RNA sequence: GGGAACGACUCGAGUAGAGUCGAAAAACCAUCCUAUUCGUAGGAUGGUGCACCAAUGCCGAUUGUAUAUAAUACCGCAGGCGGAAAAGCGGUUCAAAUAAGGAACUUGUCAGUUCGCUGACAAGAAAUACGAGCCAUGUUUCGACAUGGCUCGUAUAAAAGAAACAACAACAACAAC
Reactivity to DMS in 0.01 (KOAc 150mM, MgCl2 10mM, bicine 150mM(pH8.5), 24C), signal-to-noise 1, nucleotides 027 to 126: a000c000c000a000u000c000c000u000a010u000u010c200g030u000a030g010g030a000u000g000g020u000g010c120a260c010c020a080a120u020g000c010c000g020a160u030u000g020u010a070u000a100u000a110a110u010a030c010c000g000c020a180g080g000c070g030g000a070a070a160a030g000c010g020g010u000u010c060a080a090a090u010a050a130g070g000a040a170c030u000u000g000u000c000a020g000u000u000c180g020c010u010g000a020c000a020a000g020a060a090
The record gives the reactivity of an RNA of 177 nucleotides to DMS. For DMS, 618 sequencing reads were counted. Conditions: 150 mM KOAc, 10 mM MgCl2 and 150 mM bicine (pH 8.5), 24 C. For DMS the reverse transcriptase was MarathonRT.